[RMDB]
Chemical mapping of a 177-nucleotide RNA with 2A3 and DMS. The reactions ran in a buffer of 150 mM KOAc, 10 mM MgCl2 and 150 mM bicine (pH 8.5), at 24 C. 2A3 adducts were read by reverse transcription with SuperScript II with manganese.

RNA sequence: GGGAACGACUCGAGUAGAGUCGAAAACAGACUUGUCCAUGCCAGCCGUCAAAAUGAGCAAUAUGAAAUAUCCUGUUUUUGGGUGAGGUGUAACUGUAUUUAGAUUAGAUCUCAAUAACACGAUGACCGAAGUGUCAAACUUCGGUUUGACACUUCGAAAAGAAACAACAACAACAAC
Reactivity to 2A3 in 0.01 (KOAc 150mM, MgCl2 10mM, bicine 150mM(pH8.5), 24C), signal-to-noise 6, nucleotides 027 to 126: c020a000g080a050c040u030u040g030u060c040c010a030u080g050c000c010a030g020c040c010g040u070c060a020a030a060a180u150g020a090g050c040a040a040u070a090u180g120a070a020a020u130a030u050c000c010u030g040u040u020u030u070u070g070g020g040u040g020a030g000g040u050g030u060a080a080c050u040g040u080a120u030u110u040a050g020a090u020u080a060g050a150u020c010u000c000a010a040u040a100a020c050a020c080g040a030u070g060a020c040
Reactivity to DMS in 0.01 (KOAc 150mM, MgCl2 10mM, bicine 150mM(pH8.5), 24C), signal-to-noise 5, nucleotides 027 to 126: c070a070g010a090c090u010u010g010u010c020c030a060u010g010c040c020a070g000c020c030g030u000c050a040a030a130a080u010g000a080g010c060a060a070u000a100u000g010a070a060a070u020a080u000c020c020u000g000u010u000u000u000u000g010g020g000u010g010a080g010g030u000g000u010a060a040c090u010g020u020a090u030u010u020a030g010a090u000u000a070g000a130u000c010u000c010a020a060u000a050a050c070a040c160g010a070u000g010a100c150